[RMDB]
RNA sequence: GGGAACGACUCGAGUAGAGUCGAAAAUACAAGAAGGGGGGACGGAGUAGGCUAUGUUGGCCGGGCGACGGUUGUCCCGGUUUAAGCGUGUAGGCUGGUUUUCCAGGCAAAUCCGGAAGAAAAUGAAUCGUGAUUUAUCUUUCGAGAUAAAUCACGAAAAAGAAACAACAACAACAAC
Reactivity to DMS in 0.01 (KOAc 150mM, MgCl2 10mM, bicine 150mM(pH8.5), 24C), signal-to-noise 2, nucleotides 027 to 126: u010a090c130a070a070g010a120a140g020g000g000g000g010g020a040c010g010g000a080g020u010a090g020g000c090u020a060u000g010u000u010g020g020c020c000g010g000g040c300g010a050c190g010g010u010u000g000u010c030c020c000g000g010u000u000u010a060a040g020c060g000u010g020u000a050g000g010c030u020g000g000u000u000u000u010c010c000a150g010g000c030a060a070a070u000c030c030g000g020a070a080g010a030a050a080a110u010g000a100a120